RNA sequence: GGGAACGACUCGAGUAGAGUCGAAAAGUCUAGCGAACGGAUCCCACCCGGGAGACACGCAAGUCGCGAAUUACGCCGACCGGCCAAGGUCAAUAGCAGAACUCAACUGCAUGAGUAAGCUAGACGAAGCAUAGGUAUACUUCGGUAUACCUAUGCUAAAAGAAACAACAACAACAAC
Reactivity to 2A3 in 0.01 (KOAc 150mM, MgCl2 10mM, bicine 150mM(pH8.5), 24C), signal-to-noise 5, nucleotides 027 to 126: g000u000c000u010a010g000c000g030a040a030c030g040g030a030u010c010c010c010a020c020c010c010g020g030g010a060g000a030c030a020c030g020c030a090a060g190u170c040g000c030g040a110a190u290u100a120c090g010c050c030g030a020c010c010g010g000c000c030a060a010g000g000u020c010a040a080u070a080g000c000a000g040a160a080c070u060c230a060a140c030u020g000c030a050u080g010a020g080u020a000a030g000c010u000a010g000a000c010g000a020
Reactivity to DMS in 0.01 (KOAc 150mM, MgCl2 10mM, bicine 150mM(pH8.5), 24C), signal-to-noise 6, nucleotides 027 to 126: g010u000c000u000a020g000c010g000a230a050c050g000g030a040u010c010c010c010a140c300c030c030g000g000g010a100g000a010c010a140c040g020c040a080a130g020u010c250g000c040g000a180a090u000u010a060c130g020c010c010g010a120c010c050g010g010c010c020a170a140g000g000u000c000a080a120u020a080g000c010a020g000a100a090c140u000c170a060a110c030u000g010c020a080u000g000a100g010u000a030a290g010c010u000a010g000a030c000g000a110

The record gives the reactivity of an RNA of 177 nucleotides to 2A3 and DMS. Values cover nucleotides 27 to 126. 2A3 adducts were read by reverse transcription with SuperScript II with manganese. DMS adducts were read by reverse transcription with MarathonRT. DMS (dimethyl sulfate) methylates the pairing face of unpaired adenines and cytosines. The RNA was probed in 150 mM KOAc, 10 mM MgCl2 and 150 mM bicine (pH 8.5) at 24 C.